The record gives the reactivity of an RNA of 177 nucleotides to 2A3 and DMS. Source: RMDB libraries RFM100 and RFMREP, as collected in RNAgym. In probing experiments dimethyl sulfate is read out at A N1 and C N3, which are open when not base-paired. DMS adducts were read by reverse transcription with MarathonRT. Values are in units of 0.01, from 0 to 300, in steps of 10.
RNA sequence: GGGAACGACUCGAGUAGAGUCGAAAAAAGCUCUUUGGCAAACACCUUCCUUUCAACUGGGGUGCGCUGAAAAGUUCACUUCCGGGAGAGAGAUGAUAGCACGGUUUUUGAGGACGCAUUUUGUCCGAAGUGAUCUAGAGUUCGCUCUAGAUCACUUAAAAGAAACAACAACAACAAC
Reactivity to 2A3 in 0.01 (KOAc 150mM, MgCl2 10mM, bicine 150mM(pH8.5), 24C), signal-to-noise 6, nucleotides 027 to 126: a000a000g060c060u050c000u090u070u110g090g000c030a030a040a010c040a030c030c000u040u080c000c000u010u030u020c020a040a030c020u010g020g000g000g000u010g010c020g000c010u000g040a040a030a020a000g010u020u020c000a010c000u300u110c050c000g000g020g000a030g000a000g000a000g010a010u150g030a040u090a050g060c070a030c150g040g020u020u020u000u030u080g050a040g010g010a010c050g010c100a140u020u060u110u300g020u000c000c010g000
Reactivity to DMS in 0.01 (KOAc 150mM, MgCl2 10mM, bicine 150mM(pH8.5), 24C), signal-to-noise 4, nucleotides 027 to 126: a070a020g010c030u000c050u000u020u010g000g020c080a050a050a080c060a080c070c020u000u010c060c000u000u000u000c050a040a270c020u000g000g000g000g000u000g000c050g000c000u010g000a080a070a110a000g010u000u000c000a010c010u010u040c020c000g000g010g000a300g000a030g010a010g000a100u020g000a090u040a040g030c110a130c230g000g000u000u000u000u000u020g010a080g010g010a020c080g020c150a100u010u000u000u000g000u010c000c010g000